An RNA of 177 nucleotides, treated with DMS and 2A3 and read out base by base.

RNA sequence: GGGAACGACUCGAGUAGAGUCGAAAAUACUCUGUUUUUGAUUGAUGUGUGGUAGGAAAAAAAGGCUUAGGACUCAGCACCUUGAUCUCGCCUACCUUACUAAGUUGAGCAUGCCUAUUUUUUACCCACUAUACCCUCACUUCGGUGAGGGUAUAGUAAAAGAAACAACAACAACAAC
Reactivity to DMS in 0.01 (KOAc 150mM, MgCl2 10mM, bicine 150mM(pH8.5), 24C), signal-to-noise 2, nucleotides 027 to 126: u000a100c060u000c040u010g010u000u000u000u020u000g020a080u000u000g000a060u010g020u000g020u000g010g010u010a030g020g000a010a010a020a060a120a100a120g000g000c040u010u010a050g010g020a120c070u010c110a070g000c110a070c100c040u000u000g000a070u010c050u010c160g020c020c000u000a030c040c030u000u000a030c070u000a130a070g010u000u000g020a040g000c040a040u000g010c030c060u000a010u000u010u000u010u030u000a090c030c010c010
Reactivity to 2A3 in 0.01 (KOAc 150mM, MgCl2 10mM, bicine 150mM(pH8.5), 24C), signal-to-noise 1, nucleotides 027 to 126: u100a000c030u020c010u100g050u040u030u060u110u140g120a140u020u050g040a120u100g030u010g000u030g030g030u030a050g020g050a000a000a030a020a000a050a010g030g000c020u010u070a010g110g050a110c010u020c220a000g010c070a060c020c040u030u040g030a070u080c060u050c110g030c000c000u020a010c000c010u000u000a020c030u050a060a020g000u020u070g030a010g000c000a030u050g000c010c020u010a080u040u020u000u000u000u080a060c000c010c010

Values cover nucleotides 27 to 126. The DMS profile rests on 1,554 reads.